Structure probing data (2A3 and DMS) for a 177-nucleotide construct. The RNA was probed in 150 mM KOAc, 10 mM MgCl2 and 150 mM bicine (pH 8.5) at 24 C. For DMS, 6,686 sequencing reads were counted. For DMS the reverse transcriptase was MarathonRT.

RNA sequence: GGGAACGACUCGAGUAGAGUCGAAAAUUGCUUUCCGCACUUCACCGCUUCUUGGCUGGUACGCCAUCAGCACUGUCCUGUACCGCAUUGGUGGAUCUGGUAGCCGAUAAGCGUGCGCAGAACCAGCAGCUUUCAUAUACUUCGGUAUAUGAAAGCUAAAAGAAACAACAACAACAAC
Reactivity to 2A3 in 0.01 (KOAc 150mM, MgCl2 10mM, bicine 150mM(pH8.5), 24C), signal-to-noise 4, nucleotides 027 to 126: u080u070g010c000u030u050u020c010c010g020c020a050c010u100u070c030a040c070c040g010c020u060u030c010u080u090g050g010c030u010g030g060u040a020c020g020c010c020a020u020c010a010g020c010a010c070u050g050u060c020c020u140g080u140a060c010c010g020c070a140u050u190g030g010u020g010g050a080u030c050u060g010g130u050a060g020c030c000g020a030u020a090a040g020c010g050u060g010c070g010c040a040g020a080a060c010c000a010g060c020
Reactivity to DMS in 0.01 (KOAc 150mM, MgCl2 10mM, bicine 150mM(pH8.5), 24C), signal-to-noise 5, nucleotides 027 to 126: u000u010g010c080u000u000u000c040c050g020c050a070c090u010u000c060a080c070c040g010c040u010u010c060u000u000g000g010c010u010g010g020u000a040c100g010c020c050a040u000c040a050g040c040a090c060u000g000u000c030c060u010g010u010a080c040c060g010c150a110u000u000g020g020u000g000g000a050u000c050u000g020g010u000a080g010c020c020g010a080u000a100a090g010c030g020u000g000c100g030c080a060g010a100a110c060c050a070g010c130